An RNA of 207 nucleotides, treated with 2A3 and read out base by base. For 2A3, 996 sequencing reads were counted.

[RMDB]
RNA sequence: GGGAACGACUCGAGUAGAGUCGAAAAGGGGUCCCUCAAUCCCUCCGAACUACUCCUGUAUGCUGAAGCCUCCACGGCAUACAACAAGGGAGCGGAGAACUUGAGGGACGGAGGCACCCAAAACCCGCAUGCAGAGGUUCGCCUCUGCAUGCGGGAAUCAUAACCACUACUUCGGUAGUGGUUAUGAAAAAGAAACAACAACAACAAC
Reactivity to 2A3 in 0.01 (KOAc 150mM, MgCl2 10mM, bicine 150mM(pH8.5), 24C), signal-to-noise 1, nucleotides 027 to 156: g040g000g010g010u000c000c040c000u000c010a120a180u250c000c000c020u000c000c000g020a070a040c060u200a050c000u300c060c060u150g020u000a010u000g000c000u010g030a050a010g010c020c000u010c010c000a000c000g010g010c020a030u040a010c000a100a040c090a130a150g070g000g000a010g050c000g030g010a020g010a030a020c030u000u010g000a000g020g000g000a010c000g010g000a000g010g000c000a040c000c000c000a030a120a040a160c000c000c010g000c020a000u000g040c030a000g010a000g070g000u150u260c300g090c010c000u030c000u020g030c030a000u000g000c020g000g000g000a000a010

2A3 is a SHAPE reagent: it acylates the 2'-hydroxyl of flexible nucleotides of all four kinds. For 2A3 the reverse transcriptase was SuperScript II with manganese.